[RMDB]
Chemical mapping of a 177-nucleotide RNA with 2A3 and DMS.

RNA sequence: GGGAACGACUCGAGUAGAGUCGAAAAGCUUAGCAGUUCGCUGCUAAGCGACGUUGACGGCCCUCACCGUUGACAAAUCCCAAUGAGGACAGGUCACUGACAGAUAUUAAGCGUUCGCGCUUAAUAAGCGAUCAAUGAUGUUCGCAUCAUUGAUCGCAAAAGAAACAACAACAACAAC
Reactivity to 2A3 in 0.01 (KOAc 150mM, MgCl2 10mM, bicine 150mM(pH8.5), 24C), signal-to-noise 1, nucleotides 027 to 126: g000c010u000u000a000g000c010a030g020u030u110c210g080c110u000g000c000u000a000a000g010c000g020a010c010g030u000u040g000a000c000g000g010c000c050c000u020c030a080c000c000g000u000u000g000a020c020a020a180a020u040c040c000c000a000a080u230g000a010g010g060a030c050a050g140g000u110c030a040c260u100g050a030c040a050g100a050u030a000u040u000a000a010g010c020g000u050u170c260g000c010g080c050u000u000a010a000u000a070a000
Reactivity to DMS in 0.01 (KOAc 150mM, MgCl2 10mM, bicine 150mM(pH8.5), 24C), signal-to-noise 1, nucleotides 027 to 126: g000c000u000u000a000g000c000a000g030u000u010c300g030c000u000g000c000u000a000a000g000c000g010a020c200g050u000u000g010a010c010g000g000c060c060c040u000c080a250c010c000g040u010u000g010a000c030a100a150a140u000c000c000c000a050a020u000g000a020g000g000a220c030a070g000g000u000c060a120c030u000g020a030c110a090g010a160u000a020u010u000a000a000g020c010g010u000u000c220g010c030g050c000u010u000a000a000u000a030a090
For DMS, 765 sequencing reads were counted. The RNA was probed in 150 mM KOAc, 10 mM MgCl2 and 150 mM bicine (pH 8.5) at 24 C.